[RMDB]
RNA sequence: GGGAACGACUCGAGUAGAGUCGAAAAGGCGACCCCAGGGAAAGUGCCACAGAGAGCAAACCGCCAUGCCUUGCAUGGUAAGGGUGAAAGGGUGGGGUAAGAGCCCACCGCGCCGCUGGUGACAGUGACGUAAAUUCUAAUUCGUUAGAAUUUACGUAAAAGAAACAACAACAACAAC
Reactivity to 2A3 in 0.01 (KOAc 150mM, MgCl2 10mM, bicine 150mM(pH8.5), 24C), signal-to-noise 9, nucleotides 027 to 126: g030g000c020g010a070c010c010c010c030a040g030g010g030a080a140a040g080u060g040c020c000a060c060a050g180a010g010a010g060c040a050a060a040c000c010g000c000c000a000u010g000c000c130u150u300g000c000a000u010g000g010u100a100a160g040g000g010u070g030a060a030a020g100g000g000u020g000g000g010g000u020a040a030g030a030g120c000c000c000a000c000c000g000c010g000c000c010g020c020u020g010g020u030g020a040c020a080g030u020g110
Reactivity to DMS in 0.01 (KOAc 150mM, MgCl2 10mM, bicine 150mM(pH8.5), 24C), signal-to-noise 9, nucleotides 027 to 126: g000g010c050g010a140c070c010c010c040a120g010g010g010a050a070a070g010u010g010c020c030a080c100a090g010a140g010a120g010c040a030a080a060c010c010g000c000c000a010u000g000c000c190u020u040g010c000a010u000g000g010u000a030a070g010g000g010u000g000a070a100a100g010g010g010u000g000g000g000g010u010a070a100g000a220g000c000c000c010a010c000c000g010c070g010c050c020g000c030u000g000g000u010g000a110c050a050g010u010g010